[RMDB]
RNA sequence: GGGAACGACUCGAGUAGAGUCGAAAAAGUCAGUUGUCCGACUUACGAGUCGGACCACUGACAUGGCAGCUGGAUCCAGCCAGGCGGUGUAUCGCCAAACCCAGCCAAUCAAUCUACCCACCGGGAAUACAGAAAGCGAACUUCGGUUCGCUUUCAACAAACAAAGAUACUUCGGUAUCUUUGUUUGAAAAGAAACAACAACAACAAC
Reactivity to 2A3 in 0.01 (KOAc 150mM, MgCl2 10mM, bicine 150mM(pH8.5), 24C), signal-to-noise 3, nucleotides 027 to 156: a000g000u010c000a000g000u000u000g000u010c010c000g000a000c010u040u040a050c240g090a000g010u000c000g010g000a000c000c000a010c000u000g000a000c000a000u000g010g000c010a020g010c000u010g000g020a070u100c110c030a020g000c000c010a010g000g010c020g020g020u240g080u200a150u290c000g000c000c000a010a010a010c010c000c000a000g050c020c000a020a070u120c020a020a060u050c040u150a110c010c000c050a120c090c110g050g020g070a070a020u180a110c040a090g010a000a020a000g010c000g010a000a000c000u030u050c160g050g000u020u000c000g000c000u000u000u010c000a000a000
Reactivity to DMS in 0.01 (KOAc 150mM, MgCl2 10mM, bicine 150mM(pH8.5), 24C), signal-to-noise 2, nucleotides 027 to 156: a080g000u000c000a010g030u000u000g010u000c010c000g010a000c000u000u030a160c260g000a100g050u020c000g000g000a010c000c020a000c060u010g000a040c020a160u000g000g000c050a140g030c090u020g030g000a050u000c090c120a160g050c030c020a100g020g020c030g000g020u010g040u010a100u010c000g020c000c020a040a060a030c050c020c010a050g010c010c000a070a100u000c100a110a120u000c100u000a150c010c000c040a160c120c030g010g000g010a110a120u000a080c140a120g010a050a010a020g000c000g010a000a010c010u000u020c290g070g000u010u000c010g000c000u010u000u000c000a050a180
An RNA of 207 nucleotides, treated with 2A3 and DMS and read out base by base. The 2A3 profile rests on 3,230 reads. DMS adducts were read by reverse transcription with MarathonRT. 2A3 adducts were read by reverse transcription with SuperScript II with manganese. The RNA was probed in 150 mM KOAc, 10 mM MgCl2 and 150 mM bicine (pH 8.5) at 24 C.